[RMDB]
RNA sequence: GGGAACGACUCGAGUAGAGUCGAAAAUGAAGGUCAACGGGUUGCUGGGACCUUACUGCCUGCCUGCCGAUUCGGUCCUUAAACCGUCUCGCUCGCGUGCACACAUACCCUUCAAGCCUGUCGCAAGAUACGGAUGUUAUUUCGAUAACAUCCGUAUAAAAGAAACAACAACAACAAC
Reactivity to DMS in 0.01 (KOAc 150mM, MgCl2 10mM, bicine 150mM(pH8.5), 24C), signal-to-noise 9, nucleotides 027 to 126: u000g010a100a050g010g010u000c060a100a070c100g010g010g010u010u000g010c080u010g010g000g010a090c070c040u000u000a070c160u000g000c020c020u000g020c020c030u000g010c100c020g000a060u000u000c020g020g000u000c080c130u010u020a070a110a050c030c010g000u000c040u000c030g020c010u000c130g010c040g010u000g000c030a050c120a080c150a110u010a110c080c010c000u000u000c060a080a090g010c030c020u000g010u000c090g010c130a130a100g010
Reactivity to 2A3 in 0.01 (KOAc 150mM, MgCl2 10mM, bicine 150mM(pH8.5), 24C), signal-to-noise 3, nucleotides 027 to 126: u100g020a020a010g040g020u080c030a070a040c060g040g000g030u080u070g040c070u080g030g020g030a050c010c000u010u030a080c040u040g000c000c000u020g010c000c010u040g050c070c010g000a010u020u010c010g000g040u050c020c030u140u180a110a090a020c000c020g000u000c010u010c010g020c000u010c000g010c010g020u040g000c030a030c000a000c010a060u160a170c000c000c000u010u020c050a030a020g040c000c010u040g040u080c050g010c110a060a020g010